[RMDB]
RNA sequence: GGGAACGACUCGAGUAGAGUCGAAAAGCAUAGCGUCAAGUUGGUUGACCAGAAGUCUGGUUAGCAAACAGAGUAAAACCAAAAGGUUAGACGCACUCUGUCAAAAAGUACGAAAGUACAAAGAUAACAUUGUAGAGUCCUUCGGGACUCUACAAUGAAAAGAAACAACAACAACAAC
Reactivity to DMS in 0.01 (KOAc 150mM, MgCl2 10mM, bicine 150mM(pH8.5), 24C), signal-to-noise 1, nucleotides 027 to 126: g000c140a060u000a210g040c010g010u000c050a090a180g000u000u000g010g030u010u000g000a000c010c080a030g010a290a270g000u010c000u000g020g020u000u000a010g000c070a030a050a010c020a050g010a060g040u010a090a060a020a040c000c000a090a080a060a060g000g000u010u020a050g000a020c050g000c040a070c080u010c030u000g020u010c120a010a020a040a050a050g000u000a000c000g000a100a010a080g000u000a000c000a070a080a090g000a020u040a010a230